[RMDB]
RNA sequence: GGGAACGACUCGAGUAGAGUCGAAAAGCACUGCCUGUUUAUGGUGGUCGUUAAUGUCAAAACCAUAAAACCCGCGUUGGGUCGAGGAAGUUCUAUGAAACCGUAUCAUAGGAUAUGGGCGACGCAGCUAUAAUAAUAAUUUCGAUUAUUAUUAUAGAAAAGAAACAACAACAACAAC
Reactivity to DMS in 0.01 (KOAc 150mM, MgCl2 10mM, bicine 150mM(pH8.5), 24C), signal-to-noise 6, nucleotides 027 to 126: g020c030a210c050u010g000c030c020u010g000u000u000u020a020u010g000g000u000g010g010u030c100g010u020u050a100a100u040g010u020c030a060a090a070a040c020c010a010u000a010a020a050a060c010c010c010g000c060g000u010u000g000g010g000u010c000g010a040g000g000a160a300g000u000u000c010u000a010u000g000a040a110a150c180c210g010u020a070u000c000a020u010a020g010g010a010u000a040u030g010g010g000c030g000a030c030g010c090a050g010
Reactivity to 2A3 in 0.01 (KOAc 150mM, MgCl2 10mM, bicine 150mM(pH8.5), 24C), signal-to-noise 3, nucleotides 027 to 126: g030c030a010c070u050g020c000c020u060g040u070u050u060a060u070g000g000u000g010g030u010c020g020u050u180a160a080u160g030u040c020a060a030a050a050c010c000a010u050a030a090a020a040c010c030c010g020c030g060u100u130g030g020g010u010c000g010a070g020g020a090a050g020u010u000c000u030a010u000g020a090a080a040c080c090g050u140a080u070c000a010u010a020g020g010a010u010a030u170g050g040g010c020g000a010c010g000c020a010g030
The record gives the reactivity of an RNA of 177 nucleotides to DMS and 2A3. Conditions: 150 mM KOAc, 10 mM MgCl2 and 150 mM bicine (pH 8.5), 24 C. The 2A3 profile rests on 2,258 reads.